An RNA of 177 nucleotides, treated with 2A3 and DMS and read out base by base. For DMS, 1,571 sequencing reads were counted. As a SHAPE reagent, 2A3 marks flexible, mostly unpaired nucleotides at the ribose 2'-OH. Conditions: 150 mM KOAc, 10 mM MgCl2 and 150 mM bicine (pH 8.5), 24 C. Values cover nucleotides 27 to 126. DMS adducts were read by reverse transcription with MarathonRT. 2A3 adducts were read by reverse transcription with SuperScript II with manganese.
[RMDB]
RNA sequence: GGGAACGACUCGAGUAGAGUCGAAAAAGACUCCGAUACGUCGGAGUCACGCUAUACUAGCCCUGAACUUAUCGGCUCACUGCUACGAGCCGGUUUUCAUUAAACAGCAGCCAUUACGAUGGCUGCAAGGUUCGAAACAUUUCGAUGUUUCGAACCUAAAAGAAACAACAACAACAAC
Reactivity to 2A3 in 0.01 (KOAc 150mM, MgCl2 10mM, bicine 150mM(pH8.5), 24C), signal-to-noise 5, nucleotides 027 to 126: a000g000a000c000u000c000c010g010a020u030a050c160g130u020c000g000g000a000g000u000c000a000c010g060c000u160a080u110a280c100u110a050g050c000c000c010u010g030a020a020c060u120u070a010u090c000g000g020c000u000c010a080c110u270g080c060u170a100c150g000a000g000c000c010g000g000u000u000u010u000c010a020u050u160a120a090a080c070a050g000c000a000g000c000c010a000u010u060a050c270g120a030u000g000g010c000u000g010c000a000
Reactivity to DMS in 0.01 (KOAc 150mM, MgCl2 10mM, bicine 150mM(pH8.5), 24C), signal-to-noise 2, nucleotides 027 to 126: a060g000a060c030u000c010c010g020a010u000a170c200g100u000c000g000g020a030g030u000c000a000c110g010c070u010a070u020a110c260u000a020g070c020c000c020u010g000a030a130c300u050u050a000u000c000g000g000c000u000c000a220c080u000g010c160u050a020c120g050a030g020c000c000g000g000u000u000u000u020c030a020u040u050a080a110a230c160a070g000c000a010g000c000c000a000u000u000a120c140g000a120u000g000g000c010u000g020c000a000